[RMDB]
RNA sequence: GGGAACGACUCGAGUAGAGUCGAAAACUGGCUACCACUCGGAAUGACAAGCUGAUGUACCUGGUGCUGGUGUGCGCGAUCGUGGCUGGCCUGGCAUGCACGCUGAUGGGCGCCACCCAUGAGGGCGAGAGAAUAGUCUCUUCGGAGACUAUUCUCUAAAAGAAACAACAACAACAAC
Reactivity to 2A3 in 0.01 (KOAc 150mM, MgCl2 10mM, bicine 150mM(pH8.5), 24C), signal-to-noise 1, nucleotides 027 to 126: c000u010g080g010c040u080a100c030c060a000c040u050c040g020g070a120a090u070g050a100c060a070a030g010c050u030g070a110u090g080u120a070c020c000u010g050g020u050g040c050u030g000g060u060g030u100g040c040g000c040g070a030u060c050g030u030g000g050c000u000g040g000c000c030u000g040g000c040a040u130g030c070a060c110g000c050u080g010a110u110g030g070g020c000g000c010c000a000c000c000c000a060u090g060a090g000g050g000c060g000
Reactivity to DMS in 0.01 (KOAc 150mM, MgCl2 10mM, bicine 150mM(pH8.5), 24C), signal-to-noise 2, nucleotides 027 to 126: c040u010g010g030c020u000a040c040c030a080c080u020c030g000g000a140a070u030g000a110c130a140a080g000c040u000g010a050u020g020u010a090c070c020u010g000g040u000g030c040u010g010g000u010g020u000g010c040g020c110g020a040u000c070g020u010g000g020c040u000g000g000c010c040u010g010g020c050a100u000g000c040a110c080g010c040u000g010a080u000g000g000g020c060g010c010c040a070c050c020c010a030u030g000a130g000g000g020c090g010
About this RNA:
Chemical mapping of a 177-nucleotide RNA with 2A3 and DMS. For 2A3, 1,609 sequencing reads were counted. 2A3 adducts were read by reverse transcription with SuperScript II with manganese. For DMS, 1,948 sequencing reads were counted. For DMS the reverse transcriptase was MarathonRT. The reactions ran in a buffer of 150 mM KOAc, 10 mM MgCl2 and 150 mM bicine (pH 8.5), at 24 C. It was measured as part of the RMDB library OK2TST.